[RMDB]
RNA sequence: GGGAACGACUCGAGUAGAGUCGAAAAGUGUGGACUUUGUUCGCAAAGUCCACACAAAAACCGUAGGAACUCACAUGGAGUCCUUUCGAAAGAGACGGACUAUGAAGUGUAGGUUCCUAAACGGAAAAAUCUGCAUGUCGUUCGCGACAUGCAGAAAGUCAUCAUUACUCUUCGGAGUAAUGAUGACAAAAGAAACAACAACAACAAC
Reactivity to 2A3 in 0.01 (KOAc 150mM, MgCl2 10mM, bicine 150mM(pH8.5), 24C), signal-to-noise 2, nucleotides 027 to 156: g010u000g020u000g000g000a000c000u000u030u020g040u130u110c120g000c150a010a000a000g000u050c000c000a000c010a010c000a000a000a000a000a000c000c010g000u000a000g000g010a010a000c010u060c180a020c020a050u040g010g060a020g000u000c000c000u070u050u010c050g070a110a090a040g040a020g000a020c230g020g010a000c020u070a300u300g050a010a000g000u000g000u050a060g000g000u000u010c000c000u010a050a060a020c030g000g010a100a030a030a000a130u020c000u000g000c000a000u000g010u000c010g020u050u100c260g020c000g130a000c000a000u000g000c000a000g000a000a000a000
This 207-nucleotide RNA was probed chemically with 2A3. 2A3 adducts were read by reverse transcription with SuperScript II with manganese.